The record gives the reactivity of an RNA of 177 nucleotides to DMS and 2A3. The 2A3 profile rests on 5,474 reads. In probing experiments dimethyl sulfate is read out at A N1 and C N3, which are open when not base-paired. The reactions ran in a buffer of 150 mM KOAc, 10 mM MgCl2 and 150 mM bicine (pH 8.5), at 24 C. DMS adducts were read by reverse transcription with MarathonRT. For 2A3 the reverse transcriptase was SuperScript II with manganese.
RNA sequence: GGGAACGACUCGAGUAGAGUCGAAAAUGCUCCUUGCACACACCGCCCGUCAAAGCACCCGAGUGAGGUCCGGAUGAGGCCUGGUCACCAGGUCGAAUCUGGGCUUCGCAAGGGGGCUUAAGUCGUAAAAGUUUGGAUAGUUCGCUAUCCAAACUUUAAAAGAAACAACAACAACAAC
Reactivity to DMS in 0.01 (KOAc 150mM, MgCl2 10mM, bicine 150mM(pH8.5), 24C), signal-to-noise 4, nucleotides 027 to 126: u040g000c050u000c020c040u000u000g010c030a050c040a080c050a060c050c030g010c030c020c010g020u010c060a050a070a020g020c010a010c010c000c000g000a300g000u000g000a020g010g010u000c000c000g000g000a010u010g010a300g000g000c010c010u010g010g010u040c120a140c050c000a000g000g010u000c000g020a130a010u000c000u010g000g000g000c010u010u010c000g000c030a020a270g010g000g010g000g010c010u000u010a030a080g020u010c050g000u020a080
Reactivity to 2A3 in 0.01 (KOAc 150mM, MgCl2 10mM, bicine 150mM(pH8.5), 24C), signal-to-noise 3, nucleotides 027 to 126: u110g020c010u040c010c010u020u120g040c030a020c010a000c000a020c020c010g000c020c000c000g030u040c080a090a010a000g000c010a010c000c000c000g000a010g000u010g010a000g000g000u010c000c000g010g000a010u010g020a020g000g000c010c000u000g020g000u300c100a150c160c000a000g020g000u010c000g010a020a000u010c000u000g000g000g010c000u000u000c000g010c010a000a000g000g000g000g000g000c000u000u000a040a010g030u030c010g020u030a050